Structure probing data (2A3 and DMS) for a 177-nucleotide construct. Reactivities are given for positions 27 through 126. For 2A3 the reverse transcriptase was SuperScript II with manganese. It was measured as part of the RMDB library OK1LIB. Conditions: 150 mM KOAc, 10 mM MgCl2 and 150 mM bicine (pH 8.5), 24 C.
[RMDB]
RNA sequence: GGGAACGACUCGAGUAGAGUCGAAAAGAGGGGGUGAUGAGGUGGCAGUAGUUUAGCUGCUUUAGAAAGUUCUCGACGUCGUGCAGGAAACACAGCUCCAUAUGGACGGUCCCGCCAUACGUAUCCACUUGGGAUUUCGAUUCGUCGAAAUCCCAAGAAAAGAAACAACAACAACAAC
Reactivity to 2A3 in 0.01 (KOAc 150mM, MgCl2 10mM, bicine 150mM(pH8.5), 24C), signal-to-noise 3, nucleotides 027 to 126: g150a010g000g020g000g000g020u000g030a060u080g010a010g020g030u030g050g000c010a020g020u170a030g000u100u030u210a060g020c030u000g000c000u080u010u000a100g100a020a100a030g030u100u010c000u000c000g060a060c090g080u050c010g000u020g000c030a040g050g060a020a140a030c210a000c010a060g020c050u010c010c000a040u060a080u250g020g030a000c020g020g060u040c010c000c000g000c030c000a030u110a060c060g060u080a080u020c080c000a020
Reactivity to DMS in 0.01 (KOAc 150mM, MgCl2 10mM, bicine 150mM(pH8.5), 24C), signal-to-noise 2, nucleotides 027 to 126: g020a130g030g000g000g000g020u010g000a110u050g000a080g010g030u000g000g020c010a030g000u000a090g060u090u020u020a130g020c000u000g000c020u090u020u000a080g040a070a120a080g020u020u000c050u000c070g020a080c070g000u000c070g000u020g020c040a000g000g000a080a070a120c070a060c090a000g000c050u000c030c030a110u000a120u030g000g000a060c060g000g000u000c000c020c000g000c030c070a020u020a000c140g010u020a080u000c040c010a160